[RMDB]
RNA sequence: GGGAACGACUCGAGUAGAGUCGAAAAACAGGAAAAGUGUUGGAAUGUUUGAAGGUCUUGCGGUUGUCAAGGACCAAGUCGUUAGUGUUACUAUAUAUUACUACCCUACGUGUUACUUUGUUAGGUGGCCCCACCUCACUUUCGUGAAGGCUAGGAAGUAUAUUUAGCACUUCGGUGCUAAAUAUACAAAAGAAACAACAACAACAAC
Reactivity to DMS in 0.01 (KOAc 150mM, MgCl2 10mM, bicine 150mM(pH8.5), 24C), signal-to-noise 2, nucleotides 027 to 156: a140c070a090g000g010a060a040a080a140g000u010g010u000u000g000g000a100a190u000g020u010u010u010g000a100a100g010g030u000c030u010u000g030c000g050g010u000u000g030u060c030a130a130g020g000a100c020c020a060a170g010u000c080g020u010u000a070g010u000g030u010u000a100c070u000a160u000a190u000a080u020u000a060c040u000a050c030c010c010u000a070c090g020u010g000u010u000a050c100u000u000u000g000u000u000a080g020g030u000g000g010c030c020c010c030a120c010c010u000c000a020c040u000u000u000c140g010u020g030a080a080g020g020c090u000a080g020g000a120a240
Reactivity to 2A3 in 0.01 (KOAc 150mM, MgCl2 10mM, bicine 150mM(pH8.5), 24C), signal-to-noise 3, nucleotides 027 to 156: a000c030a030g050g130a020a110a000a020g050u070g020u080u030g040g060a230a130u100g080u100u090u130g110a120a040g000g010u020c030u030u050g030c070g020g060u050u030g040u070c020a020a050g050g000a030c010c020a030a020g070u070c060g030u040u070a030g000u040g050u140u050a060c050u010a020u050a050u020a030u230u120a040c020u040a030c010c010c010u030a020c030g030u060g050u080u050a050c020u160u120u070g030u110u020a030g000g000u000g020g000c000c050c000c000a020c000c000u040c030a020c000u070u240u180c020g010u040g030a040a010g020g000c030u040a020g020g030a100a060
Chemical mapping of a 207-nucleotide RNA with DMS and 2A3. The 2A3 profile rests on 2,040 reads. For DMS, 3,676 sequencing reads were counted. Conditions: 150 mM KOAc, 10 mM MgCl2 and 150 mM bicine (pH 8.5), 24 C.